[RMDB]
RNA sequence: GGGAACGACUCGAGUAGAGUCGAAAACAGCUAAUGUGAAGGAUGCAAGUCAAGGUAGAGAUGACAAUCAAAUCAACAUCCGAGAAGGGAAGUUCACAAAUGUUGUUGAUGACAUCCAGGAUCAUGCCCAAUACGUGACCUUCGGGUCACGUAUUGGAAAAGAAACAACAACAACAAC
Reactivity to DMS in 0.01 (KOAc 150mM, MgCl2 10mM, bicine 150mM(pH8.5), 24C), signal-to-noise 2, nucleotides 027 to 126: c050a180g020c100u010a050a080u000g020u000g000a160a070g010g010a070u000g000c030a110a120g000u000c020a020a160g030g030u000a040g000a140g020a210u010g000a030c100a090a070u000c110a060a080a090u010c040a020a030c010a030u000c010c100g000a150g000a060a070g000g010g020a050a080g010u010u000c070a050c170a080a040a070u000g010u010u010g000u010u000g000a090u020g000a060c100a110u000c020c040a090g000g020a100u010c020a040u010g000c220
Reactivity to 2A3 in 0.01 (KOAc 150mM, MgCl2 10mM, bicine 150mM(pH8.5), 24C), signal-to-noise 2, nucleotides 027 to 126: c020a000g020c040u100a110a040u070g010u020g060a030a020g040g010a000u040g000c070a070a080g020u010c020a030a100g090g020u080a030g050a010g000a100u050g010a010c010a000a040u070c050a040a030a120u070c020a000a020c010a010u050c040c030g050a060g040a120a030g010g080g030a060a030g080u080u090c040a030c000a090a130a110u090g010u030u030g020u020u030g020a040u060g020a020c000a040u000c010c010a030g080g050a050u070c030a040u120g040c010